Record summary:
The data come from the RNA Mapping Database (RMDB), library 15KREP. Chemical mapping of a 177-nucleotide RNA with 2A3 and DMS. The RNA was probed in 150 mM KOAc, 10 mM MgCl2 and 150 mM bicine (pH 8.5) at 24 C. For 2A3 the reverse transcriptase was SuperScript II with manganese.
[RMDB]
RNA sequence: GGGAACGACUCGAGUAGAGUCGAAAAGUUUAUCAUAAACUUGGAGAACGUGUACGCCAAGCUAUCUUAAACACUGUUAAAUUUUGUGACCACAUGGUCAAGGCUGGUUUAGUCGGUGUGCUCACACGAUGGAUUGGAUGUUCGCAUCCAAUCCAUCAAAAGAAACAACAACAACAAC
Reactivity to 2A3 in 0.01 (KOAc 150mM, MgCl2 10mM, bicine 150mM(pH8.5), 24C), signal-to-noise 2, nucleotides 027 to 126: g010u010u000u030a120u120c040a060u100a070a060a000c000u010u000g000g050a070g000a060a020c060g020u060g050u070a020c050g040c000c000a030a000g000c030u040a010u120c010u040u130a080a050a020c040a020c040u050g130u090u130a120a110a110u130u130u110u090g040u020g010a000c010c000a020c080a140u200g030g010u060c050a040a030g050g020c010u050g110g160u100u050u060a020g040u050c020g000g000u000g000u000g000c010u000c020a020c010a020c070
Reactivity to DMS in 0.01 (KOAc 150mM, MgCl2 10mM, bicine 150mM(pH8.5), 24C), signal-to-noise 2, nucleotides 027 to 126: g000u000u000u020a060u000c140a070u000a010a050a080c000u000u000g000g000a180g000a120a160c260g040u010g020u030a080c150g020c000c000a000a010g030c080u000a040u000c060u000u000a010a020a040c030a140c080u010g020u000u000a050a050a090u000u010u000u010g000u010g000a020c080c020a070c120a080u020g000g000u010c060a080a030g020g000c010u000g020g010u000u010u000a040g000u010c020g020g010u000g000u000g000c230u000c040a020c060a040c260
Annotation:
The DMS profile rests on 1,172 reads.